Source information
Chemical mapping of a 207-nucleotide RNA with 2A3. The reactions ran in a buffer of 150 mM KOAc, 10 mM MgCl2 and 150 mM bicine (pH 8.5), at 24 C. High 2A3 reactivity points to a flexible backbone, as in loops and unpaired stretches. Source: RMDB library OK3TST, as collected in RNAgym. For 2A3 the reverse transcriptase was SuperScript II with manganese. Values are in units of 0.01, from 0 to 300, in steps of 10.

[RMDB]
RNA sequence: GGGAACGACUCGAGUAGAGUCGAAAAGGCGUAUUAUGUGGAUAGGAGCUUCGGCUCCUAUAUUGCUUUAUAAAUUUUUGGUAAAAUAAACCAAAACAAUGAGGAUAUUAAAUGAAAGUAUGCAUUUUUAUGGCUCGAGGUCUUGAAGGUUGCGGUGCAGCCAUUCUAAUUUCGAUUAGAAUGGCUGAAAAGAAACAACAACAACAAC
Reactivity to 2A3 in 0.01 (KOAc 150mM, MgCl2 10mM, bicine 150mM(pH8.5), 24C), signal-to-noise 1, nucleotides 027 to 156: g060g010c070g000u060a000u140u080a080u180g090u110g110g050a060u020a030g000g000a020g000c030u070u080c110g070g000c000u030c010c010u010a010u010a020u030u050g010c000u060u160u020a180u070a040a180a140u040u060u020u040u050g050g000u070a060a240a100a100u150a190a050a070c000c000a030a020a000a050c050a050a100u110g000a020g090g000a030u080a070u240u220a050a080a080u080g070a030a020a090g000u050a020u060g000c010a020u000u080u040u080u080a110u040g040g000c000u010c050g000a000g000g040u040c030u050u100g020a060a010g020g000u020u070g000c010g030g000u030g000